[RMDB]
RNA sequence: GGGAACGACUCGAGUAGAGUCGAAAAUUCCGGAGAUUUCUCUCGAGAUCCUCGACUAACUUUCUUGAAUUCACCCACUUCUCAAGAACCUCUUCCCUUCCGUCGCGCUUCCGCCUCGAUUCGGACCGGCUCAUCUCGGCAAGAGGCGGCAGUCCUCGCUCAUAUUAAGCUUCGGCUUAAUAUGAGCAAAAGAAACAACAACAACAAC
Reactivity to 2A3 in 0.01 (KOAc 150mM, MgCl2 10mM, bicine 150mM(pH8.5), 24C), signal-to-noise 3, nucleotides 027 to 156: u060u020c020c020g100g030a080g000a030u110u250u070c030u050c010u060c100g030a040g010a120u080c010c040u050c030g060a050c020u110a210a040c050u220u150u040c010u060u070g120a130a120u180u070c010a070c020c080c020a100c070u100u040c060u040c080a080a120g000a080a130c020c040u040c000u040u040c010c000c000u030u020c050c020g060u060c040g010c020g000c070u030u000c010c010g000c010c010u020c010g090a130u160u130c040g060g110a120c020c000g060g010c040u030c050a130u040c100u070c040g010g010c020a060a040g000a000g010g020c000g000g000c000a000g000u000c000c040u020c080